[RMDB]
RNA sequence: GGGAACGACUCGAGUAGAGUCGAAAAGACGAUGCGCCGGUGCGCGUGAAGGGCGAGCAGGGCGUCAGCGCUCUUGCCCCCGCCGCAAUGCAUGACGAAGGGUGAGGGGCUGACGGAGCGUGAGUAACAUGGCAUCGACUUUCGAGUCGAUGCCAUGAAAAGAAACAACAACAACAAC
Reactivity to 2A3 in 0.01 (KOAc 150mM, MgCl2 10mM, bicine 150mM(pH8.5), 24C), signal-to-noise 2, nucleotides 027 to 126: g080a020c070g050a060u180g040c030g020c020c050g240g240u090g020c080g040c030g020u000g120a080a180g190g030g030c000g000a010g020c000a010g060g050g000c010g000u060c030a060g000c040g030c000u000c000u030u040g000c020c000c020c000c000g000c030c030g180c140a060a070u210g060c040a060u160g150a150c020g110a150a030g120g030g000u030g040a240g000g000g040g000c030u040g020a070c070g020g000a000g010c020g000u050g050a020g020u030a030a110
Reactivity to DMS in 0.01 (KOAc 150mM, MgCl2 10mM, bicine 150mM(pH8.5), 24C), signal-to-noise 2, nucleotides 027 to 126: g000a080c110g010a090u010g020c050g020c030c040g050g000u000g030c010g020c010g000u010g010a170a090g020g010g000c010g030a050g000c030a100g000g000g000c030g030u000c110a190g000c010g000c000u000c000u000u010g010c010c000c000c020c000g050c000c000g070c130a080a080u010g020c160a150u010g020a150c130g040a220a170g020g030g000u000g010a170g050g010g030g040c010u010g000a120c220g000g000a000g020c010g010u030g000a110g010u000a090a120
Chemical mapping of a 177-nucleotide RNA with 2A3 and DMS. Conditions: 150 mM KOAc, 10 mM MgCl2 and 150 mM bicine (pH 8.5), 24 C.